Source: RMDB library VIROID, as collected in RNAgym. An RNA of 177 nucleotides, treated with DMS and 2A3 and read out base by base. The DMS profile rests on 996 reads. As a SHAPE reagent, 2A3 marks flexible, mostly unpaired nucleotides at the ribose 2'-OH.
[RMDB]
RNA sequence: GGGAACGACUCGAGUAGAGUCGAAAAGCGAGGAGUAAGCCCAUAGCGAUGGAAAGAGAUGCUAGGAGUUAGAGGAGACCAGAACGAGGAGGAAAGUAAAGAAAGCAACGGGGCUAGUCGGUGGGUGCCAAUAUAACGCGUUCGCGCGUUAUAUUGGAAAAGAAACAACAACAACAAC
Reactivity to DMS in 0.01 (KOAc 150mM, MgCl2 10mM, bicine 150mM(pH8.5), 24C), signal-to-noise 1, nucleotides 027 to 126: g020c060g040a130g000g010a060g000u000a070a140g000c030c000c010a070u000a070g000c050g000a150u040g000g020a080a080a080g010a100g020a080u000g010c050u000a070g000g000a060g010u000u000a080g000a040g000g000a090g000a060c060c040a090g060a040a100c080g000a030g030g000a090g000g010a040a050a080g000u000a020a050a100g010a050a130a060g000c040a040a080c090g010g000g000g040c070u010a070g020u020c070g010g010u000g010g010g020u000g020
Reactivity to 2A3 in 0.01 (KOAc 150mM, MgCl2 10mM, bicine 150mM(pH8.5), 24C), signal-to-noise 1, nucleotides 027 to 126: g070c060g010a030g000g020a020g000u070a060a040g050c000c010c010a020u060a020g050c050g050a060u080g030g070a080a030a020g060a020g010a010u070g020c000u020a040g000g020a060g010u100u010a060g020a060g030g060a020g050a050c050c020a010g000a100a020c030g010a050g000g040a020g020g050a130a000a000g040u100a020a040a060g030a050a090a000g000c020a020a050c050g010g000g010g060c010u010a050g100u100c060g030g030u070g040g000g030u010g040